[RMDB]
RNA sequence: GGGAACGACUCGAGUAGAGUCGAAAACUACAGUGCCAUUGCCUCGAUGCCAAGAAGAGCAGCACACAGUUAUGGUAUUUCUGCAGUGAAAUGGUGGCCGUUCGACACGGGGCUCUUUGUCACGGCAUCUUUCGACCACACAGUGAAAAUAUGGGACUCAUCCAGUAAAUUUCGAUUUACUGGAUGAAAAAGAAACAACAACAACAAC
Reactivity to DMS in 0.01 (KOAc 150mM, MgCl2 10mM, bicine 150mM(pH8.5), 24C), signal-to-noise 3, nucleotides 027 to 156: c020u000a040c030a090g020u000g010c000c020a110u010u000g020c010c010u000c050g030a110u000g040c020c020a130a250g020a110a100g020a100g040c020a120g030c050a100c050a090c060a080g020u000u010a040u010g020g040u010a270u010u000u010c040u010g020c040a090g030u010g020a100a050a090u000g020g050u000g000g020c000c020g020u000u010c060g000a060c050a060c040g000g010g020g020c030u000c050u010u000u000g000u010c050a090c080g010g000c020a060u000c030u000u000u010c030g020a090c000c020a060c040a060c030a120g030u000g000a070a060a090a100u010a050u000g000g000g010a140c150
Reactivity to 2A3 in 0.01 (KOAc 150mM, MgCl2 10mM, bicine 150mM(pH8.5), 24C), signal-to-noise 6, nucleotides 027 to 156: c060u100a050c020a040g030u030g040c010c010a040u030u110g000c000c020u050c090g030a030u040g000c000c010a070a040g060a050a010g010a030g010c010a020g040c010a010c010a000c000a040g030u110u080a060u100g020g050u040a070u050u110u020c030u050g050c030a050g020u020g080a050a030a100u130g020g010u030g020g070c010c010g020u070u100c070g030a010c010a010c060g010g000g070g000c020u030c010u070u050u050g050u050c050a030c060g000g000c010a010u010c000u020u080u040c030g040a020c010c010a030c010a010c020a060g080u090g130a020a060a010a020u290a070u200g010g020g050a030c120

Structure probing data (DMS and 2A3) for a 207-nucleotide construct. The reactions ran in a buffer of 150 mM KOAc, 10 mM MgCl2 and 150 mM bicine (pH 8.5), at 24 C.